[RMDB]
RNA sequence: GGGAACGACUCGAGUAGAGUCGAAAAGUUUUUUACGCGUGUGCACCCGCUAACACGAAUUACCCAGUUAUUUUCGACUUUACUCGAGUCGUUAUAGCGUGAGUUGGCGGAGUUCUCCGCGAAAUAACUAGUAGUUAGGAUUCGUCCUAACUACUAGAAAAGAAACAACAACAACAAC
Reactivity to DMS in 0.01 (KOAc 150mM, MgCl2 10mM, bicine 150mM(pH8.5), 24C), signal-to-noise 4, nucleotides 027 to 126: g000u000u000u000u010u010u000a070c190g030c010g030u000g010u000g010c050a080c060c060c050g010c050u000a070a050c030a030c030g000a080a070u000u010a090c060c030c030a120g010u000u000a090u000u000u000u000c000g000a020c000u000u000u000a010c020u000c010g010a000g000u000c000g010u000u000a030u000a060g010c040g010u000g010a070g010u000u000g010g000c020g010g000a090g010u010u000c070u000c010c010g010c020g000a030a060a040u010a060a150